[RMDB]
RNA sequence: GGGAACGACUCGAGUAGAGUCGAAAAACCUAUGGAUUCGUCCAUAGGUGCUGGCGCGCGGCCUUUGUCCUGUCGCGUGUGCGUGGUCGGCGAUAUACGCGCAAUAGUGACAAUUCGUUGUCACUAACGACAUACCUAUAUUCGUAUAGGUAUGUCGAAAAGAAACAACAACAACAAC
Reactivity to 2A3 in 0.01 (KOAc 150mM, MgCl2 10mM, bicine 150mM(pH8.5), 24C), signal-to-noise 9, nucleotides 027 to 126: a000c000c000u000a000u010g000g000a010u020u110c200g040u000c080c000a000u000a000g010g000u010g040c060u060g040g020c020g000c000g000c020g050g040c000c000u070u100u140g070u050c010c030u040g040u090c020g000c020g030u060g050u070g040c030g020u040g030g090u090c040g050g050c020g010a030u040a010u020a180c030g010c000g000c030a030a100u060a050g000u000g000a000c000a010a030u050u060c260g070u050u010g000u000c000a000c010u010a050a050
Reactivity to DMS in 0.01 (KOAc 150mM, MgCl2 10mM, bicine 150mM(pH8.5), 24C), signal-to-noise 9, nucleotides 027 to 126: a020c000c000u000a000u000g000g010a030u000u010c200g010u000c000c000a000u000a010g000g010u000g000c110u000g010g010c040g010c040g010c030g000g000c020c110u000u000u000g000u010c060c060u000g010u000c020g010c010g010u000g020u000g020c040g030u000g010g010u000c080g010g000c030g000a080u010a080u000a060c040g010c030g010c110a130a150u000a010g010u000g000a020c000a010a040u000u020c200g010u000u000g000u000c000a010c000u000a010a100